The record gives the reactivity of an RNA of 207 nucleotides to 2A3 and DMS. For DMS the reverse transcriptase was MarathonRT. Values cover nucleotides 27 to 156. It was measured as part of the RMDB library RNAMAK. 2A3 adducts were read by reverse transcription with SuperScript II with manganese.

[RMDB]
RNA sequence: GGGAACGACUCGAGUAGAGUCGAAAAGAUAUGGAGUUGUUGUCAGCUUACUGUAGGCAACAGCAGGCUUCGGAAACGAAGCCUGACAUGCCUAUCAUUAAGCUUGGAUUUACAACUCCUAAGUCAAAAGCAUGCCGAAGUUCGCUUCGGCAUGCAACUAAUUGGAGGUGUUCGCACCUCCAAUUAGAAAAGAAACAACAACAACAAC
Reactivity to 2A3 in 0.01 (KOAc 150mM, MgCl2 10mM, bicine 150mM(pH8.5), 24C), signal-to-noise 2, nucleotides 027 to 156: g030a000u070a050u140g010g000a000g000u000u000g000u010u020g000u000c020a000g020c000u010u000a010c010u010g020u010a010g010g000c010a030a030c070a200g050c000a010g010g000c000u000u000c010g020g020a040a030a040c020g000a010a010g020c000c010u010g010a010c010a030u030g000c000c000u060a090u250c040a020u030u010a000a000g000c040u020u080g070g000a030u180u170u210a000c000a000a000c000u000c000c000u010a030a010g010u000c040a110a060a020a000g000c000a010u000g000c000c010g000a000a000g000u080u190c190g090c170u000u000c000g010g010c000a000u000g010c000a010a010
Reactivity to DMS in 0.01 (KOAc 150mM, MgCl2 10mM, bicine 150mM(pH8.5), 24C), signal-to-noise 1, nucleotides 027 to 156: g000a140u010a180u010g010g010a050g010u000u010g020u000u010g010u030c000a100g020c010u000u000a010c100u000g040u030a000g000g010c000a040a090c110a100g060c020a050g010g020c000u000u000c010g000g040a160a160a300c010g020a040a010g020c000c000u010g000a040c010a300u010g020c000c010u000a000u030c040a010u020u000a010a010g000c030u010u000g080g000a100u000u010u040a040c020a010a050c000u000c010c000u000a000a090g000u000c120a030a110a180a210g010c000a000u000g010c000c000g000a090a050g000u000u010c300g010c010u000u010c000g000g010c010a000u000g000c000a000a010